[RMDB]
RNA sequence: GGGAACGACUCGAGUAGAGUCGAAAACAUGGUGUUCGCACCAUGAAAAAUCCUAAGUCUUCCCCAUAUCUCUAGCGUGGGCUAUAAUCUAUCGGAAACGAUAGGUAGCCUCGGGUAUGGAGCGAAGAUAUGGAAAAAAGUCACCUUCGGGUGACAAGAACUUGCAUGAGUUCGCUCAUGCAAGUUCAAAAGAAACAACAACAACAAC
Reactivity to 2A3 in 0.01 (KOAc 150mM, MgCl2 10mM, bicine 150mM(pH8.5), 24C), signal-to-noise 2, nucleotides 027 to 156: c010a000u020g000g000u010g040u070u060c140g050c040a000c000c000a010u000g000a080a000a000a000a000u060c050c000u100a260a050g050u000c000u000u000c030c020c020c000a000u020a010u010c080u010c120u170a060g110c070g150u240g030g000g000c010u020a030u020a220a240u090c000u000a000u010c010g070g020a150a050a060c000g000a000u000a000g000g000u010a000g010c010c000u010c000g000g000g000u000a000u000g000g010a050g040c160g020a000a000g000a000u030a060u030g010g000a070a050a060a000a080a050g000u050c000a000c030c000u020u070c250g100g000g000u000g000a000c000a010a010

An RNA of 207 nucleotides, treated with 2A3 and read out base by base. The RNA was probed in 150 mM KOAc, 10 mM MgCl2 and 150 mM bicine (pH 8.5) at 24 C. Values cover nucleotides 27 to 156. For 2A3, 1,692 sequencing reads were counted.